[RMDB]
RNA sequence: GGGAACGACUCGAGUAGAGUCGAAAAACGGUGCGGAAGUUCGCGCUUUCGUGAAACGCGAAAAUCGGACGGUGGCUGCAAGUCGCAUCGCAAAACCGCGGCAAGUGGAGUUAGCGAGAGGAGGCUGAAACCAUCCAACACUUCGGUGUUGGAUGAAGAUCAAACUUCGAUUCGUCGAAGUUUGAUCAAAAGAAACAACAACAACAAC
Reactivity to DMS in 0.01 (KOAc 150mM, MgCl2 10mM, bicine 150mM(pH8.5), 24C), signal-to-noise 1, nucleotides 027 to 156: a040c040g040g000u010g000c030g010g000a100a100g020u020u000c040g000c090g020c020u000u000u030c140g050u000g020a130a010a030c020g010c000g030a040a010a100a080u000c050g020g050a100c000g000g000u000g010g000c100u000g100c090a120a130g010u010c040g000c020a170u000c040g000c040a040a060a110a110c050c070g010c050g020g000c080a070a100g000u000g000g000a120g000u020u000a050g020c020g000a100g070a160g030g020a040g010g030c020u000g040a100a090a070c070c000a020u000c000c010a000a010c010a000c030u000u020c250g050g040u000g010u010u000g020g000a000u000g010a000a090
Reactivity to 2A3 in 0.01 (KOAc 150mM, MgCl2 10mM, bicine 150mM(pH8.5), 24C), signal-to-noise 3, nucleotides 027 to 156: a000c030g000g010u040g010c040g030g070a100a020g040u050u060c000g020c020g010c070u040u040u000c060g020u070g080a180a070a030c130g010c020g040a040a020a000a040u160c030g010g020a010c020g060g040u030g020g010c040u040g000c090a050a010g020u000c010g010c010a020u050c050g010c030a060a100a010a020c030c050g020c010g040g030c070a120a080g040u020g060g050a080g030u050u110a030g040c040g010a030g020a020g100g020a050g000g030c010u030g010a070a010a000c010c010a000u000c000c000a000a000c010a000c000u010u080c210g100g000u010g000u000u000g000g000a000u000g000a000a000